[RMDB]
RNA sequence: GGGAACGACUCGAGUAGAGUCGAAAAUGACGAGCCUAAGACACUCCAUGAAGAUGUCUGAUCGGUUACGCAGACUGAAUCGCUACCUAACAGGUUGGCUUGGGUAUUAUCAAUUGGUGGACACACCGUCCCGGGACGUGUUCGCACGUCCCGGGACAAAAGAAACAACAACAACAAC
Reactivity to DMS in 0.01 (KOAc 150mM, MgCl2 10mM, bicine 150mM(pH8.5), 24C), signal-to-noise 1, nucleotides 027 to 126: u010g050a050c000g010a060g000c000c010u000a110a000g040a060c000a040c200u000c020c010a060u010g000a170a070g000a170u010g010u010c000u000g000a090u060c090g010g030u000u030a040c300g020c140a110g000a020c000u040g040a180a150u000c030g010c070u000a020c010c020u000a070a060c160a010g010g020u000u020g000g080c030u000u000g000g000g020u000a160u020u000a060u000c060a030a200u000u050g000g000u000g000g000a060c300a070c030a140c070c030

Structure probing data (DMS) for a 177-nucleotide construct.
Conditions: 150 mM KOAc, 10 mM MgCl2 and 150 mM bicine (pH 8.5), 24 C.
For DMS, 513 sequencing reads were counted.
High DMS reactivity at an A or C suggests that its Watson-Crick edge is free.
The data come from the RNA Mapping Database (RMDB), library OK2TRN.